[RMDB]
RNA sequence: GGGAACGACUCGAGUAGAGUCGAAAAGACAAAUUGAUUUUGAGCCAGAACAAAUUGAAUCCAAAGCUCAAUCUUCUGAUUUGUCCAAAUAUUAUUCAGAAGCUUAUCACCGGAUCGUUGGAGGCUAUGAUAUUACUCAGUUCGCUGAGUAAUAUCAAAAAGAAACAACAACAACAAC
Reactivity to DMS in 0.01 (KOAc 150mM, MgCl2 10mM, bicine 150mM(pH8.5), 24C), signal-to-noise 5, nucleotides 027 to 126: g000a050c020a010a000a020u000u000g010a020u000u000u000u000g000a020g030c000c090a170g020a080a100c130a060a100a150u010u000g020a140a120u010c060c070a070a190a210g010c030u000c010a000a010u000c020u000u010c030u010g010a010u000u000u000g010u000c030c090a080a060a070u010a070u010u010a070u000u010c080a120g020a090a070g000c080u000u000a060u000c040a050c060c040g020g000a070u010c080g020u000u010g010g010a060g010g010c040u000a060
Reactivity to 2A3 in 0.01 (KOAc 150mM, MgCl2 10mM, bicine 150mM(pH8.5), 24C), signal-to-noise 4, nucleotides 027 to 126: g010a000c010a000a010a020u010u020g000a010u000u030u010u050g000a000g000c010c020a050g040a110a050c050a100a250a120u250u220g040a080a060u100c100c030a100a060a000g000c000u010c000a000a010u030c020u150u040c030u070g020a020u010u010u020g000u000c000c020a010a080a030u170a110u260u100a090u090u100c030a040g100a160a020g060c010u070u100a110u250c010a010c060c050g140g100a150u110c050g060u040u050g040g040a040g000g000c010u030a060
The data come from the RNA Mapping Database (RMDB), library OK2TST.
Chemical mapping of a 177-nucleotide RNA with DMS and 2A3.
The RNA was probed in 150 mM KOAc, 10 mM MgCl2 and 150 mM bicine (pH 8.5) at 24 C.
Reactivities are given for positions 27 through 126.